[RMDB]
RNA sequence: GGGAACGACUCGAGUAGAGUCGAAAAAAACAGACAACACCUAAGUCCAGUGGAGGGGGUAACAUGAUUGAGAAGAAUAAGACCCCAGUUAUUCCUUCAAAAGACAGUCCAACCUCUGAAAGCAGCACUCUUUAUCGAGAGAGCGUUGAGCCCAUUAUAGACGUGGUAAAUUCGUUUACCACGUCUAAAAAGAAACAACAACAACAAC
Reactivity to 2A3 in 0.01 (KOAc 150mM, MgCl2 10mM, bicine 150mM(pH8.5), 24C), signal-to-noise 2, nucleotides 027 to 156: a000a000a000c080a040g100a040c050a050a010c010a020c000c060u050a060a040g060u030c010c030a050g030u060g010g050a050g030g000g000g000g000u010a050a020c090a180u120g020a090u040u050g010a040g040a130a000g020a100a020u040a030a020g090a060c010c010c000c010a000g020u020u010a000u030u030c000c000u000u000c010a030a030a030a030g050a040c040a010g010u020c040c000a060a080c040c040u040c010u000g060a080a000a000g030c040a010g000c010a010c000u010c030u070u090u050a210u170c080g000a030g000a000g010a020g050c000g010u010u020g040a010g020c020c010c000a060u190u270a060
Reactivity to DMS in 0.01 (KOAc 150mM, MgCl2 10mM, bicine 150mM(pH8.5), 24C), signal-to-noise 2, nucleotides 027 to 156: a070a070a050c050a130g030a100c010a090a050c010a090c020c030u010a110a160g030u000c030c040a110g080u000g020g030a140g000g000g010g030g000u020a030a040c040a120u010g000a290u000u000g000a290g010a120a170g010a090a070u010a100a100g000a070c050c030c010c060a130g000u000u000a020u010u020c020c020u000u000c040a080a030a040a130g000a060c070a160g030u000c070c000a080a060c010c010u000c000u020g010a040a090a100g000c020a050g000c020a050c020u000c010u000u000u000a090u020c150g000a160g010a020g000a060g050c000g000u000u010g000a200g000c000c000c010a140u010u010a210
Background: The record gives the reactivity of an RNA of 207 nucleotides to 2A3 and DMS. It was measured as part of the RMDB library OK3TST. The RNA was probed in 150 mM KOAc, 10 mM MgCl2 and 150 mM bicine (pH 8.5) at 24 C. High 2A3 reactivity points to a flexible backbone, as in loops and unpaired stretches.